[RMDB]
RNA sequence: GGGAACGACUCGAGUAGAGUCGAAAAAACACACAAAGAUAUGGAACGAAUCGAUAAUGAGACGUUUGACGUAAGUCGGAAACGACUUACCGAGUCUUUAUCGACUAUUCCUAAGUCAAAGCAGCAACUAUUCUAUCCCCUUCGGGGGAUAGAAUAGAAAAGAAACAACAACAACAAC
Reactivity to 2A3 in 0.01 (KOAc 150mM, MgCl2 10mM, bicine 150mM(pH8.5), 24C), signal-to-noise 1, nucleotides 027 to 126: a060a030c200a010c020a010c030a000a230a000g110a020u080a070u150g000g000a010a010c050g070a120a240u050c000g010a000u000a070a070u240g180a000g030a040c070g050u140u300u230g000a010c010g000u000a000a010g000u000c010g030g000a000a100a030c030g010a010c020u000u000a000c000c000g010a020g000u000c030u000u070u020a000u000c010g020a010c010u030a020u020u040c010c010u090a120a080g000u000c040a070a140a100g070c070a050g000c040a000a080
Reactivity to DMS in 0.01 (KOAc 150mM, MgCl2 10mM, bicine 150mM(pH8.5), 24C), signal-to-noise 2, nucleotides 027 to 126: a090a080c130a100c140a050c110a080a160a080g020a030u000a300u000g000g000a000a000c070g010a070a120u000c000g000a000u010a030a030u010g000a000g000a010c000g010u000u000u000g000a160c300g000u000a000a000g000u000c000g000g000a110a080a160c000g000a000c000u000u000a000c000c040g000a070g030u000c000u010u000u000a010u000c020g000a000c060u000a210u000u000c000c000u000a030a140g000u000c020a050a080a140g030c170a050g000c130a040a170
This 177-nucleotide RNA was probed chemically with 2A3 and DMS. For DMS the reverse transcriptase was MarathonRT. It was measured as part of the RMDB library TTRDEL. The DMS profile rests on 1,424 reads. For 2A3 the reverse transcriptase was SuperScript II with manganese. Values cover nucleotides 27 to 126.